[RMDB]
Structure probing data (2A3) for a 207-nucleotide construct. The RNA was probed in 150 mM KOAc, 10 mM MgCl2 and 150 mM bicine (pH 8.5) at 24 C. The data come from the RNA Mapping Database (RMDB), library OK3TST. Values are in units of 0.01, from 0 to 300, in steps of 10.
RNA sequence: GGGAACGACUCGAGUAGAGUCGAAAAUUCUUGCCACUCCCAUUGAUGGAGGUAUCCGACAAACUCGCUGGCGCCGUACCGCUGUUGGAACCAGUUGAGCAUCGCCGCAUAGUCCUCGAAGCCGUCGAGGCGGGCGAACUCGUCGCGGUUUCGCGGCCUCUGACGCAUGAUUCGUCAUGCGUCAGAGAAAAGAAACAACAACAACAAC
Reactivity to 2A3 in 0.01 (KOAc 150mM, MgCl2 10mM, bicine 150mM(pH8.5), 24C), signal-to-noise 2, nucleotides 027 to 156: u060u000c010u050u120g060c050c020a130c050u000c070c010c110a210u050u230g130a190u080g040g050a020g080g010u130a160u010c110c010g010a050c060a060a160a050c120u020c050g060c080u010g050g020c000g020c070c040g090u090a100c020c060g020c040u020g020u140u170g020g030a010a030c060c000a060g050u030u030g070a000g010c030a090u020c010g010c000c000g110c120a040u160a100g070u130c000c000u010c010g030a100a040g140c150c080g060u070c000g000a000g000g000c050g010g000g010c000g000a030a000c010u000c010g000u010c000g040c070g060g000u000u150u030c010g000c000g000g030c020